[RMDB]
RNA sequence: GGGAACGACUCGAGUAGAGUCGAAAAUAAGCAAAAGACAACCACCUUUCCCGCUGACAAUAGCGUUAUCCCUCUGUACUUCGGUAAUAUGAGGGCACAGUAAAUCCCGCAAGGAUGAGAAUGUGAUUAAACAGUUACAGCUUCGGCUGUAACUGAAGCUCCUAUACUAGUUCGCUAGUAUAGGAGCAAAAGAAACAACAACAACAAC
Reactivity to 2A3 in 0.01 (KOAc 150mM, MgCl2 10mM, bicine 150mM(pH8.5), 24C), signal-to-noise 3, nucleotides 027 to 156: u080a020a010g050c040a040a060a040a070g100a100c080a010a070c060c020a060c050c020u030u030u030c000c000c040g000c060u050g020a060c090a150a170u090a110g060c050g060u130u080a100u080c000c000c000u010c020u040g070u050a030c010u030u060c120g050g040u060a100a070u090a230u250g010a000g000g010g000c000a000c000a000g020u010a000a050a020u000c000c010c020g140c110a030a030g010g010a010u020g000a020g030a030a030u040g010u000g020a030u070u170a100a100a020c010a000g000u000u000a000c000a010g000c000u020u140c200g140g000c010u000g000u000a000a000c000u000g000a020a020
Reactivity to DMS in 0.01 (KOAc 150mM, MgCl2 10mM, bicine 150mM(pH8.5), 24C), signal-to-noise 1, nucleotides 027 to 156: u000a080a070g030c030a050a030a070a170g010a090c050a000a130c030c010a120c060c030u000u010u000c020c030c030g030c050u000g030a110c070a020a100u010a050g020c100g030u020u020a060u000c010c020c000u000c030u000g030u010a010c010u000u000c280g030g000u000a010a100u010a040u020g010a030g000g000g010c020a060c130a080g040u000a120a110a110u000c010c010c010g070c140a130a100g040g000a040u010g000a160g000a090a070u010g030u020g000a130u000u000a030a100a170c000a020g030u010u000a000c040a020g030c020u000u000c300g080g010c000u010g010u000a000a010c000u010g010a050a050